[RMDB]
RNA sequence: GGGAACGACUCGAGUAGAGUCGAAAAGAACUUUGGCCGGCUCUGAAUAGAAUCAGGGGGUGCAAACUGCCCACUGGCAGAAAGGAUUAUAGCAAAUGCGUACCCUAUUGCAAUACAGCCCGGCCAACAUAGACUACUCUAUUCGUAGAGUAGUCAAGUAAGCUAAAUUCUUCGGAAUUUAGCUUACAAAAGAAACAACAACAACAAC
Reactivity to DMS in 0.01 (KOAc 150mM, MgCl2 10mM, bicine 150mM(pH8.5), 24C), signal-to-noise 2, nucleotides 027 to 156: g010a170a110c020u000u000u000g020g020c020c010g030g020c020u000c020u000g020a130a150u000a060g000a180a120u000c080a050g020g000g000g040g040u010g020c050a050a100a090c090u000g020c030c060c100a100c180u040g080g010c020a040g000a160a090a120g000g010a210u010u000a100u010a100g030c060a050a080a080u010g010c050g010u000a180c020c000c010u000a140u000u000g010c060a060a270u010a120c050a110g010c300c020c020g030g000c000c010a020a010c060a110u010a220g020a050c010u000a000c000u000c000u000a030u000u000c290g040u000a020g010a050g000u000a020g030u000c000a030a100
Reactivity to 2A3 in 0.01 (KOAc 150mM, MgCl2 10mM, bicine 150mM(pH8.5), 24C), signal-to-noise 4, nucleotides 027 to 156: g040a120a040c000u040u010u020g010g000c000c010g020g000c060u040c040u070g010a070a040u130a140g070a110a090u140c070a090g010g020g010g000g010u080g020c020a020a050a110c020u030g010c000c020c050a170c240u280g020g000c020a010g080a100a110a000g120g040a050u210u210a140u270a210g060c040a070a090a090u100g010c030g020u110a060c000c000c020u080a100u040u070g060c060a030a060u060a190c010a020g010c040c000c010g000g000c010c000a000a000c000a000u060a030g010a000c000u000a000c000u000c000u000a020u080u050c120g020u020a010g000a000g010u000a000g000u010c000a000a000